[RMDB]
RNA sequence: GGGAACGACUCGAGUAGAGUCGAAAAACAGUACCAGCUGCUACGGCAGCUGGUGCUGAACUUUCAUGGAGUUAAGAAACCACGUAAACAAAGCGGAACCGAAAAGCUAAACGAGUAGGAAGAAUAAAUAGGUACCACCACUUCGGUGGUGGUACAACACACAGCUGAACUUCGGUUCAGCUGUGUGAAAAGAAACAACAACAACAAC
Reactivity to 2A3 in 0.01 (KOAc 150mM, MgCl2 10mM, bicine 150mM(pH8.5), 24C), signal-to-noise 2, nucleotides 027 to 156: a000c000a010g000u000a000c000c000a000g000c000u010g000c010u030a050c140g180g010c010a010g050c010u010g000g000u000g010c000u000g000a000a000c010u000u210u130c070a090u110g110g010a080g020u110u120a180a010g070a140a060a000c030c020a060c120g050u130a050a100a090c120a170a060a000g000c010g030g030a100a040c000c000g050a000a000a000a000g030c040u180a210a070a060c000g000a000g000u000a000g030g020a030a030g010a070a070u210a090a080a050u140a080g120g000u000a000c000c000a000c000c000a010c000u050u050c240g090g000u000g000g000u000g000g030u000a000c000a000a000